[RMDB]
Source information: This 177-nucleotide RNA was probed chemically with 2A3.
RNA sequence: GGGAACGACUCGAGUAGAGUCGAAAAACGAGCUGCGGAAGGUCGUUGACGAGCGCGUCACACAGGUGACACACGACGCACUGCUGGCCACCAAGACCGCCUACAUCAUGCCGACCUCGGGAACUACCGGAGUACAGGCGUUCGCGCCUGUACUCCGAAAAGAAACAACAACAACAAC
Reactivity to 2A3 in 0.01 (KOAc 150mM, MgCl2 10mM, bicine 150mM(pH8.5), 24C), signal-to-noise 1, nucleotides 027 to 126: a000c040g040a010g020c010u000g040c110g110g000a070a060g040g040u110c140g110u060u020g090a110c090g030a090g050c150g000c060g020u000c000a050c010a000c040a130g000g300u040g060a040c120a010c020a000c050g000a000c070g090c090a000c100u110g020c000u000g140g030c000c000a000c000c000a090a000g080a040c000c000g000c040c030u040a040c010a140u080c050a050u110g020c010c000g080a160c010c000u040c060g000g000g070a040a050c100u130a120c180
Notes
The data come from the RNA Mapping Database (RMDB), library OK1LIB.